[RMDB]
RNA sequence: GGGAACGACUCGAGUAGAGUCGAAAAUUACCCGCGAACAGAUUAAAAUUAACGCGGAAAAGACGCACAUUAGCGACUAUGUUGCUAAAAUACCUGGCAUGCUCGAUUCGGAUACGCAGCCACUAUUCUAUAAACUUUAUCCGAAAAUGGAAAUCAAGAGGUAAUAUUAUUUCGAUAAUAUUACCUCAAAAGAAACAACAACAACAAC
Reactivity to 2A3 in 0.01 (KOAc 150mM, MgCl2 10mM, bicine 150mM(pH8.5), 24C), signal-to-noise 2, nucleotides 027 to 156: u040u020a170c030c000c000g000c000g020a080a040c030a030g130a090u110u140a040a100a030a060u150u120a050a050c020g020c000g000g040a000a070a000a020g060a020c030g040c060a020c000a110u030u040a030g000c000g030a020c040u120a030u300g020u020u050g000c020u030a000a070a070a050u070a040c020c020u040g000g010c040a130u040g000c060u060c040g140a140u070u010c000g000g000a020u000a050c020g010c090a010g000c000c020a020c020u050a130u090u080c030u030a130u100a060a080a080c020u030u190u030a020u030c010c010g010a050a030a030a040u110g040g060a000a170a040u300c030a010a020